[RMDB]
Notes:
The record gives the reactivity of an RNA of 207 nucleotides to 2A3 and DMS. The RNA was probed in 150 mM KOAc, 10 mM MgCl2 and 150 mM bicine (pH 8.5) at 24 C. For DMS the reverse transcriptase was MarathonRT.
RNA sequence: GGGAACGACUCGAGUAGAGUCGAAAAGAGCAGUCGCAUAGCAAGAAUCUCGAAGGAUUAACAAAAACUAAAAUCCAAGAAUCACAACAAUAUGCUUUCUGAUUCUGUACUAAAAAGAGUAAAAUCAAUCGAAAACAAUUCAAGACCGUCGUGAUCACUGCUGAUAGUGAUUCGUCACUAUCAGCAGAAAAGAAACAACAACAACAAC
Reactivity to 2A3 in 0.01 (KOAc 150mM, MgCl2 10mM, bicine 150mM(pH8.5), 24C), signal-to-noise 4, nucleotides 027 to 156: g020a010g000c030a000g030u070c020g010c060a000u080a020g030c060a090a060g030a050a070u060c060u050c180g040a150a090g010g010a020u100u110a130a090c100a100a140a080a020a030c060u150a170a130a010a020u010c010c010a000a010g010a030a020u070c030a030c020a150a120c010a060a110u090a040u190g020c000u060u100u080c020u020g010a070u030u000c010u040g060u060a050c050u140a020a080a080a050a030g080a000g070u120a040a060a010a050u060c040a000a030u080c040g090a020a030a050a060c040a060a030u160u110c050a060a030g060a080c020c040g050u060c020g020u050g020a040u090c050a010
Reactivity to DMS in 0.01 (KOAc 150mM, MgCl2 10mM, bicine 150mM(pH8.5), 24C), signal-to-noise 2, nucleotides 027 to 156: g000a150g010c010a070g010u010c050g000c070a150u000a130g060c030a040a120g020a170a080u000c010u000c050g020a130a180g000g030a140u010u010a100a280c060a110a050a110a080a170c070u020a030a110a090a080u000c010c060a060a130g000a060a030u000c030a050c020a050a060c010a160a140u000a160u000g010c020u010u000u000c030u000g010a040u010u010c010u000g000u010a080c010u020a000a060a070a090a120g000a070g030u010a020a050a040a060u000c000a050a080u010c020g000a050a020a090a030c070a020a120u010u010c040a000a160g010a050c070c040g060u000c040g000u000g020a090u000c020a180